[RMDB]
RNA sequence: GGGAACGACUCGAGUAGAGUCGAAAAGAUAUGGAUGUACUCAGUACAUAUUCUGCGUUGAAAUCGGAAACGAUGGAGCAGAUAUGGAACCGUACAUCCUAAGUCAAAAGUCUCGUUCGCGAGACAACAUUUCCCCGAAGUUCGCUUCGGGGAAAUGAAAAGAAACAACAACAACAAC
Reactivity to 2A3 in 0.01 (KOAc 150mM, MgCl2 10mM, bicine 150mM(pH8.5), 24C), signal-to-noise 1, nucleotides 027 to 126: g050a030u050a040u170g030g000a010u000g020u020a010c000u020c020a020g000u020a000c020a010u030a020u250u230c000u020g000c030g270u300u070g040a020a040a010u000c000g000g040a110a110a050c010g010a010u010g000g020a020g020c000a030g000a020u010a000u010g030g000a000a000c020c010g000u000a000c000a000u010c000c000u000a000a000g020u000c040a050a010a130a190g000u000c010u000c020g020u090u030c300g000c020g110a000g000a010c000a000a030
Reactivity to DMS in 0.01 (KOAc 150mM, MgCl2 10mM, bicine 150mM(pH8.5), 24C), signal-to-noise 1, nucleotides 027 to 126: g000a010u000a300u000g000g010a020u000g030u010a010c000u010c010a070g010u010a080c000a010u000a000u000u000c010u000g020c010g020u020u000g000a080a150a000u000c000g010g000a170a070a210c020g010a010u010g000g030a130g000c000a000g000a030u000a010u000g000g000a130a060c300c300g000u010a000c000a010u000c000c000u000a000a030g000u000c030a070a060a140a140g010u000c010u000c010g000u000u030c180g000c040g000a010g000a010c000a050a270
An RNA of 177 nucleotides, treated with 2A3 and DMS and read out base by base. For 2A3, 2,137 sequencing reads were counted. The reactions ran in a buffer of 150 mM KOAc, 10 mM MgCl2 and 150 mM bicine (pH 8.5), at 24 C. For 2A3 the reverse transcriptase was SuperScript II with manganese. Source: RMDB library TTRDEL, as collected in RNAgym.